[RMDB]
RNA sequence: GGGAACGACUCGAGUAGAGUCGAAAAGAUAUGGAUCCUGGGAGCUCUGUGUCGGAAACGACAUCUAAGAGCUUUGAUCACAUGGAUCCUAAGUCGGAAGACCCAGAGACUUCGGUCUCUGGGUCAACAGUUAACGCAUGUUCGCAUGCGUUAACUGAAAAGAAACAACAACAACAAC
Reactivity to DMS in 0.01 (KOAc 150mM, MgCl2 10mM, bicine 150mM(pH8.5), 24C), signal-to-noise 2, nucleotides 027 to 126: g010a040u000a300u000g000g000a020u000c000c020u000g000g000g010a010g000c000u000c010u010g020u000g000u000c000g000g010a120a060a190c010g000a000c000a010u000c220u010a120a020g000a010g020c000u000u000u000g030a160u000c180a160c080a040u020g030g000a000u000c000c010u010a020a100g010u000c020g000g010a150a140g010a020c010c010c000a000g000a060g000a020c000u000u020c230g050g000u000c000u000c000u010g010g010g010u000c000a000a050
Reactivity to 2A3 in 0.01 (KOAc 150mM, MgCl2 10mM, bicine 150mM(pH8.5), 24C), signal-to-noise 1, nucleotides 027 to 126: g000a000u040a020u120g010g010a000u010c010c010u020g030g020g010a020g000c020u020c020u000g040u010g000u020c000g000g000a070a000a000c020g000a000c000a010u090c090u260a070a030g030a010g000c000u000u020u010g020a020u000c030a020c030a150u220g000g000a020u090c000c000u010a140a040g070u030c040g000g100a150a000g000a010c010c020c030a000g020a000g000a010c110u260u280c300g050g020u000c040u050c000u000g020g000g030u010c010a000a010